Chemical mapping of a 207-nucleotide RNA with DMS and 2A3. Source: RMDB library OK3TST, as collected in RNAgym.

[RMDB]
RNA sequence: GGGAACGACUCGAGUAGAGUCGAAAAGUCCGCUAUUGACUGGGGAGCACUUGCAGCGACUGGUGGAACAAUUGUUGUCUUGAUGGGCGUUGGAAAGCUUCCGGCAUAUGCUGCCGAAUUACAGGACGCUGGAAUGGAUCCAGAGACACCAAUUGCAAAAAUCGAGAGUAUUCGUACUCUCGAUUUUAAAAGAAACAACAACAACAAC
Reactivity to DMS in 0.01 (KOAc 150mM, MgCl2 10mM, bicine 150mM(pH8.5), 24C), signal-to-noise 3, nucleotides 027 to 156: g000u000c020c020g020c040u010a090u000u010g010a090c020u000g030g010g010g010a140g000c040a110c060u000u000g030c030a110g030c040g030a090c080u020g000g040u010g010g000a080a060c050a030a080u000u000g000u000u000g000u000c010u000u000g010a110u010g010g030g000c020g050u000u020g040g000a070a040a180g010c150u000u000c020c010g020g040c010a070u000a080u000g020c090u000g040c030c020g010a080a080u010u000a070c050a090g000g020a050c030g010c000u000g000g010a020a050u000g010g000a300u010c030c010a120g000a100g000a040c020a040c020c010a010a090u000u000g030c060a050
Reactivity to 2A3 in 0.01 (KOAc 150mM, MgCl2 10mM, bicine 150mM(pH8.5), 24C), signal-to-noise 3, nucleotides 027 to 156: g030u000c020c010g050c070u100a110u050u130g070a040c040u010g000g030g000g010a050g020c040a030c070u050u090g000c000a040g040c030g100a070c050u070g010g010u040g050g040a100a030c020a020a020u010u020g020u010u010g010u000c020u070u160g080a170u090g080g030g000c030g080u020u030g030g070a040a060a010g020c010u040u050c050c020g000g000c010a050u110a060u290g110c110u020g000c010c010g050a050a070u160u080a090c030a040g000g050a010c020g000c010u010g010g040a040a060u090g040g040a000u000c010c010a020g000a010g020a010c000a000c020c010a020a020u020u070g030c050a050
The reactions ran in a buffer of 150 mM KOAc, 10 mM MgCl2 and 150 mM bicine (pH 8.5), at 24 C.